An RNA of 177 nucleotides, treated with 2A3 and read out base by base. 2A3 adducts were read by reverse transcription with SuperScript II with manganese.
RNA sequence: GGGAACGACUCGAGUAGAGUCGAAAAGACCACCGCAAAUACGGUGUGCUGCCAACCCAGUACGACACGUUGCGCCGCGCGCUGUAUACGACCCUGCGUGACUAUCUGGGCCAUCCAAGCCGGGGCGCCGCAGGCUGCCAUUCGUGGCAGCCUGCGGAAAAGAAACAACAACAACAAC
Reactivity to 2A3 in 0.01 (KOAc 150mM, MgCl2 10mM, bicine 150mM(pH8.5), 24C), signal-to-noise 1, nucleotides 027 to 126: g070a070c040c040a010c010c000g060c050a050a100a080u070a000c000g020g000u090g040u070g030c050u030g000c000c000a050a000c000c100c000a030g070u140a070c110g010a060c120a000c040g080u070u100g090c160g040c090c020g250c000g060c000g000c030u050g080u000a060u000a070c000g110a160c000c000c000u080g050c000g030u060g070a110c030u060a030u130c000u000g030g000g010c050c030a070u000c000c030a110a020g020c040c040g040g030g000g040c000g000
Values cover nucleotides 27 to 126. The reactions ran in a buffer of 150 mM KOAc, 10 mM MgCl2 and 150 mM bicine (pH 8.5), at 24 C.